This 177-nucleotide RNA was probed chemically with 2A3 and DMS. Conditions: 150 mM KOAc, 10 mM MgCl2 and 150 mM bicine (pH 8.5), 24 C.
RNA sequence: GGGAACGACUCGAGUAGAGUCGAAAAAAAGCUAGGGGCACGAACCGGAUUAGAUACCCGGGUAGUCCUAGCCGUAAACGAUGCCCGCUAGGUGUCACGACGGUCGUGAAUCGUCGUGGUGCCGUAGGGCGUUGCUAGUUUUCGAACUAGCAACGCCAAAAGAAACAACAACAACAAC
Reactivity to 2A3 in 0.01 (KOAc 150mM, MgCl2 10mM, bicine 150mM(pH8.5), 24C), signal-to-noise 3, nucleotides 027 to 126: a000a000a000g020c020u020a020g010g010g020g060c140a010c020g020a090a000c000c000g020g000a000u030u080a050g040a170u190a070c000c000c000g040g010g030u070a010g000u000c000c000u010a000g000c000c000g060u060a000a100a000c090g060a070u200g070c000c010c000g020c030u050a030g010g000u000g010u010c000a000c010g000a010c000g000g010u030c060g180u090g140a220a000u010c000g000u000c000g000u000g000g000u000g000c000c000g000u000a040g010
Reactivity to DMS in 0.01 (KOAc 150mM, MgCl2 10mM, bicine 150mM(pH8.5), 24C), signal-to-noise 3, nucleotides 027 to 126: a050a100a040g000c010u000a000g000g000g000g000c230a040c040g010a180a300c020c000g000g010a050u020u000a100g000a180u060a060c230c010c010g000g000g000u020a240g000u010c000c000u010a000g000c000c040g010u020a060a060a050c120g010a090u000g000c000c010c000g000c170u000a170g000g020u010g000u000c000a000c000g000a020c010g010g000u000c050g050u010g040a100a010u000c000g000u010c000g020u000g000g040u000g000c000c000g020u010a080g000
2A3 adducts were read by reverse transcription with SuperScript II with manganese. The data come from the RNA Mapping Database (RMDB), libraries RFM100 and RFMREP.